[RMDB]
RNA sequence: GGGAACGACUCGAGUAGAGUCGAAAAGUCCCCACUUUCGAGUGGGGACAAUCAAAGUUUUGGCACUCGCAGCCCGCAGCGUUGGUGCUCGCACGCGGUGCAUAACUGCCUACUUCGGUAGGCAGAACAUCAAGUGAGUGUUCGCACUCACUUGAUGAAAAGAAACAACAACAACAAC
Reactivity to 2A3 in 0.01 (KOAc 150mM, MgCl2 10mM, bicine 150mM(pH8.5), 24C), signal-to-noise 3, nucleotides 027 to 126: g000u020c000c020c000c010a020c000u110u090u070c250g090a000g000u020g000g010g010g010a000c010a000a000u100c030a020a050a100g050u040u080u200u180g080g000c020a010c010u140c070g000c010a040g040c020c040c020g010c030a040g030c020g080u180u280g100g090u210g040c000u010c020g010c000a040c030g070c020g030g030u030g000c000a010u070a100a080c000u020g000c010c000u000a000c000u000u030c110g090g000u020a000g000g000c000a000g000a020a010
Reactivity to DMS in 0.01 (KOAc 150mM, MgCl2 10mM, bicine 150mM(pH8.5), 24C), signal-to-noise 3, nucleotides 027 to 126: g010u000c000c000c000c000a020c010u000u000u010c140g010a000g070u000g010g000g000g000a000c010a000a050u000c140a080a110a130g010u000u000u010u000g010g010c000a020c010u030c040g040c030a200g000c050c070c070g010c080a040g020c030g010u010u000g020g020u000g010c000u000c060g000c030a090c110g010c050g010g000u000g000c020a050u010a070a150c010u000g010c000c000u000a000c000u000u020c160g020g010u000a020g000g000c000a020g000a040a150